[RMDB]
RNA sequence: GGGAACGACUCGAGUAGAGUCGAAAAGUAGGACUACAAUAUCGAGAAAAUAUUUGAAGUGGAAUCAACUGGAAAGUUGAACUGUAAAAAGUGAUAGUCUUGUACACGUAAGAAUAUUAAUCGUAGUAUACGAACGAUACUUCGGUAUCGUUCGUAUAAAAGAAACAACAACAACAAC
Reactivity to 2A3 in 0.01 (KOAc 150mM, MgCl2 10mM, bicine 150mM(pH8.5), 24C), signal-to-noise 3, nucleotides 027 to 126: g110u130a060g010g100a020c020u080a030c170a110a080u070a050u220c050g000a020g000a040a300a030a000u020a010u000u020u070g070a140a020g000u020g010g010a000a020u010c000a000a000c020u010g020g040a000a040a010g000u000u000g000a000a000c000u000g000u070a000a070a130a070a000g020u040g010a030u000a020g000u000c020u020u000g000u000a000c020a000c000g020u000a000a030g000a030a010u000a000u030u030a050a000u010c020g010u020a050g070u000
Reactivity to DMS in 0.01 (KOAc 150mM, MgCl2 10mM, bicine 150mM(pH8.5), 24C), signal-to-noise 2, nucleotides 027 to 126: g000u010a030g010g010a120c040u000a060c040a070a080u030a090u040c050g010a050g000a070a090a020a000u000a000u000u000u000g000a130a170g000u000g010g000a010a000u000c000a000a000c000u000g000g030a300a020a000g010u020u000g000a000a000c010u000g000u030a000a020a100a000a000g000u020g000a060u000a040g030u000c000u000u020g010u000a300c000a000c030g000u000a040a240g000a010a000u010a000u010u010a020a170u000c000g010u000a000g000u030
Background
The data come from the RNA Mapping Database (RMDB), libraries RFM100 and RFMREP. Chemical mapping of a 177-nucleotide RNA with 2A3 and DMS. DMS adducts were read by reverse transcription with MarathonRT. The reactions ran in a buffer of 150 mM KOAc, 10 mM MgCl2 and 150 mM bicine (pH 8.5), at 24 C.